This 177-nucleotide RNA was probed chemically with DMS and 2A3. Conditions: 150 mM KOAc, 10 mM MgCl2 and 150 mM bicine (pH 8.5), 24 C. For 2A3 the reverse transcriptase was SuperScript II with manganese. For 2A3, 14,395 sequencing reads were counted. It was measured as part of the RMDB library TTRINS. DMS adducts were read by reverse transcription with MarathonRT.
[RMDB]
RNA sequence: GGGAACGACUCGAGUAGAGUCGAAAAGAUAUGGACGUCGGAACUACCCACGUUAUUUCGAUGAAAAUACUACCAUCGGAAACGAUGGUAGUAUUGGAGAAAUAGACGUGGGCCGACGUCCUAAGUCCAAUCAAUCAUGGUUCGCCAUGAUUGAUUGAAAAGAAACAACAACAACAAC
Reactivity to DMS in 0.01 (KOAc 150mM, MgCl2 10mM, bicine 150mM(pH8.5), 24C), signal-to-noise 6, nucleotides 027 to 126: g010a080u000a270u010g000g010a000c000g020u010c000g010g010a100a030c080u010a300c020c010c000a010c000g010u000u000a020u000u000u000c000g000a180u010g000a140a120a020a010u000a010c000u010a000c000c000a010u000c000g010g000a080a090a210c010g000a010u000g000g010u000a000g010u000a000u000u000g010g000a100g000a010a010a010u000a050g020a020c000g010u000g000g000g000c010c000g000a010c000g010u000c000c000u000a000a070g000u000c030
Reactivity to 2A3 in 0.01 (KOAc 150mM, MgCl2 10mM, bicine 150mM(pH8.5), 24C), signal-to-noise 4, nucleotides 027 to 126: g040a030u120a040u200g000g000a000c000g000u000c020g010g030a090a080c170u300a170c300c000c000a000c010g000u000u000a020u020u010u030c300g170a300u220g090a180a040a000a000u000a010c000u000a010c010c000a010u010c000g020g020a060a040a010c010g000a000u000g000g000u000a000g000u000a000u000u000g010g010a010g010a010a020a010u090a040g280a070c000g010u000g000g000g000c000c000g000a000c000g000u000c000c000u000a000a000g010u020c000